[RMDB]
RNA sequence: GGGAACGACUCGAGUAGAGUCGAAAAGGGAUUGGCCCGAUGAAGCCCGGCAACCUAACUUUAUUUAAGCGUAAAGUGAAGGUGCUAAUUCCAGCAAAAUGGUGUAUUCCGUUUUGGUAGAUAAGAGAAGCGUGACAUGAGUUCGCUCAUGUCACAAGUUGAGUGCACAGUUCGCUGUGCACUCAACAAAAGAAACAACAACAACAAC
Reactivity to 2A3 in 0.01 (KOAc 150mM, MgCl2 10mM, bicine 150mM(pH8.5), 24C), signal-to-noise 2, nucleotides 027 to 156: g060g000g000a100u040u170g140g020c010c030c040g010a060u140g070a050a040g010c000c040c000g040g000c030a050a090c010c020u020a040a000c040u020u010u040a050u030u150u160a160a030g070c030g040u010a000a010a010g000u040g050a120a020g000g000u000g010c000u020a100a000u070u050c030c020a010g000c040a040a010a000a060u070g010g080u030g030u140a090u110u110c040c000g030u000u000u020u020g050g090u090a110g010a180u180a200a080g050a020g060a190a000g050c070g080u000g000a000c000a000u000g000a000g000u080u110c110g040c070u010c000a000u000g000u000c000a000c000a000a000